[RMDB]
RNA sequence: GGGAACGACUCGAGUAGAGUCGAAAAUGAGGAUGCGAGACGUCAAGUGCUACCAGGGGACCGACAUCGUCCGUGGUUGCGAUCCGUUGGUGAAGCCCGUUGGCAGACAGGCCUGUGAUCUGCAGCCGCAAGGAUGCACUUUCGAGUGCAUCCUUGCAAAAGAAACAACAACAACAAC
Reactivity to 2A3 in 0.01 (KOAc 150mM, MgCl2 10mM, bicine 150mM(pH8.5), 24C), signal-to-noise 3, nucleotides 027 to 126: u180g030a040g090g000a010u050g030c040g010a040g020a060c000g000u070c060a040a070g030u010g070c010u040a060c010c030a000g030g030g010g030a040c030c030g060a050c040a100u130c040g070u000c020c040g060u080g030g010u020u020g010c000g020a060u030c020c060g110u020u190g000g050u070g060a090a040g050c000c000c060g150u120u130g030g030c020a000g010a160c010a010g140g010c020c020u060g060u090g030a070u000c020u090g010c020a010g000c010c030
Reactivity to DMS in 0.01 (KOAc 150mM, MgCl2 10mM, bicine 150mM(pH8.5), 24C), signal-to-noise 5, nucleotides 027 to 126: u020g010a110g010g010a060u000g010c060g010a080g020a110c100g010u010c080a060a100g010u010g010c020u000a060c030c030a100g000g010g000g010a050c050c050g010a110c140a060u000c080g000u000c080c110g030u010g010g010u000u010g010c030g000a020u000c030c050g000u010u000g020g010u010g000a130a140g000c010c000c100g010u010u020g010g020c090a080g000a100c110a070g010g010c030c040u000g010u000g010a050u000c010u010g010c040a080g040c080c090